[RMDB]
RNA sequence: GGGAACGACUCGAGUAGAGUCGAAAAACGGUCCGAUACGACUACGGUCGUAUCGGACCGAAAGCACUCAUUUCAAGCUGCGCGAGCAUAAGCGUGUUGCUCCGUGGUCGGGUGACGUGCGAGACAACGUUCAACUAUGAUUCGUCAUAGUUGAACGAAAAGAAACAACAACAACAAC
Reactivity to DMS in 0.01 (KOAc 150mM, MgCl2 10mM, bicine 150mM(pH8.5), 24C), signal-to-noise 3, nucleotides 027 to 126: a130c010g020g010u000c000c000g030a010u000a020c000g000a010c000u010a090c200g060g000u000c010g010u000a000u000c000g010g020a010c000c000g000a000a020a090g000c010a010c000u010c010a010u010u000u020c040a170a190g010c010u000g010c010g000c210g020a030g010c030a030u000a050a120g030c230g020u010g010u000u000g010c000u000c010c020g020u000g010g000u010c240g010g000g010u000g000a010c220g020u000g020c000g000a160g020a100c090a050a120
Reactivity to 2A3 in 0.01 (KOAc 150mM, MgCl2 10mM, bicine 150mM(pH8.5), 24C), signal-to-noise 6, nucleotides 027 to 126: a000c010g000g020u000c000c000g000a000u000a020c020g040a010c020u060a040c300g120g000u000c000g000u000a000u000c000g000g000a000c000c000g000a000a000a000g000c010a010c000u000c000a010u020u180u180c090a100a030g000c000u010g000c020g080c160g010a010g000c020a040u060a190a060g140c190g160u150g170u110u030g000c000u000c000c010g020u030g020g020u060c060g030g000g000u010g000a110c180g020u010g000c050g000a030g020a040c130a160a020
Structure probing data (DMS and 2A3) for a 177-nucleotide construct. Conditions: 150 mM KOAc, 10 mM MgCl2 and 150 mM bicine (pH 8.5), 24 C. Values cover nucleotides 27 to 126. For DMS the reverse transcriptase was MarathonRT.